[RMDB]
RNA sequence: GGGAACGACUCGAGUAGAGUCGAAAACUAGCAGAGUUCAAAGCAGGGACUUACCUUGGAAUGACUGAGUCUCUUGUUGGAUUGUAUGAGAAUUCCAAAACAAUUCGGACCAAAUUUCUUCGGGAGACGCCUCAACGACUUUCGAGUCGUUGAGGCGAAAAGAAACAACAACAACAAC
Reactivity to 2A3 in 0.01 (KOAc 150mM, MgCl2 10mM, bicine 150mM(pH8.5), 24C), signal-to-noise 1, nucleotides 027 to 126: c000u040a010g240c010a040g000a040g060u030u090c050a100a090a000g000c000a000g000g000g110a110c000u210u040a150c000c000u060u100g070g180a160a060u140g020a070c040u000g000a000g040u000c010u000c000u090u030g000u070u020g140g000a090u010u000g060u120a130u190g130a090g060a140a180u170u300c140c020a000a170a000a000c040a030a030u080u000c080g120g000a010c000c050a020a020a020u000u000u020c020u110u100c040g000g000g000a110g000a000